[RMDB]
RNA sequence: GGGAACGACUCGAGUAGAGUCGAAAACAACUCACAUUUGUGAAGAAUUUUAUUACUGCCAAUCCGGCAUGGAGUAAGGCAGUCUUUAUUUCGCCUUACAAUUCACAGAAUGCUGUGUCUCGUUCAACCCAUAAUAACCCUUCGGGGUUAUUAUGGGAAAAGAAACAACAACAACAAC
Reactivity to DMS in 0.01 (KOAc 150mM, MgCl2 10mM, bicine 150mM(pH8.5), 24C), signal-to-noise 2, nucleotides 027 to 126: c080a140a140c050u010c040a060c010a070u000u000u000g000u020g000a030a030g000a160a050u020u010u020u010a060u010u000a130c080u000g010c010c010a080a160u020c220c150g020g030c040a020u020g000g020a140g010u010a010a030g010g020c000a070g000u000c180u010u000u010a110u010u000u000c070g020c030c010u000u000a020c050a100a190u000u000c010a040c020a020g020a050a040u000g020c170u010g010u010g000u000c040u000c050g000u010u010c160a090a160
Reactivity to 2A3 in 0.01 (KOAc 150mM, MgCl2 10mM, bicine 150mM(pH8.5), 24C), signal-to-noise 2, nucleotides 027 to 126: c000a010a010c020u010c040a000c010a020u000u020u070g000u000g030a030a100g030a100a050u080u140u130u160a110u060u200a080c030u030g000c040c000a070a110u150c100c120g020g020c060a000u060g010g000a080g030u050a030a030g010g000c040a000g020u020c020u070u220u090a190u030u140u060c060g040c010c000u000u020a010c010a040a040u010u020c000a000c030a000g150a140a010u030g030c090u020g070u000g000u010c010u020c060g080u120u070c020a040a020